[RMDB]
Annotation
Conditions: 150 mM KOAc, 10 mM MgCl2 and 150 mM bicine (pH 8.5), 24 C. Structure probing data (DMS and 2A3) for a 177-nucleotide construct.

RNA sequence: GGGAACGACUCGAGUAGAGUCGAAAAGAUAUGGAUUAUAGAGCUAUGAAGCGUAACAUCAGUCGGAAACGACUGUGGUGGAGCUCGAAUAAUCCUAAGUCAAAACCAAUGCGUUCGCGCAUUGGAAGAACACAUUAUUCUUCGGAAUAAUGUGUUCAAAAGAAACAACAACAACAAC
Reactivity to DMS in 0.01 (KOAc 150mM, MgCl2 10mM, bicine 150mM(pH8.5), 24C), signal-to-noise 7, nucleotides 027 to 126: g010a030u000a200u010g010g000a000u000u000a010u000a280g000a010g020c000u000a160u010g010a140a190g010c110g010u010a070a050c100a120u000c010a020g010u010c000g010g000a070a040a100c000g020a010c000u000g010u010g010g010u000g000g000a060g020c000u000c000g000a080a090u000a000a010u000c000c000u010a020a100g010u010c020a110a070a120a190c000c000a010a000u000g010c000g020u000u010c240g010c000g010c000a010u000u000g010g010a050a070
Reactivity to 2A3 in 0.01 (KOAc 150mM, MgCl2 10mM, bicine 150mM(pH8.5), 24C), signal-to-noise 7, nucleotides 027 to 126: g010a010u030a010u070g000g000a000u000u020a010u010a050g010a000g000c020u040a070u300g180a220a080g170c080g100u090a030a030c010a130u180c010a010g010u000c010g000g000a020a020a000c010g000a000c000u020g010u030g050g000u020g010g050a090g000c000u000c000g000a030a030u000a000a010u000c000c000u000a040a010g030u010c000a020a010a070a160c000c000a000a010u010g010c010g030u040u080c300g010c010g000c140a010u010u000g000g000a020a040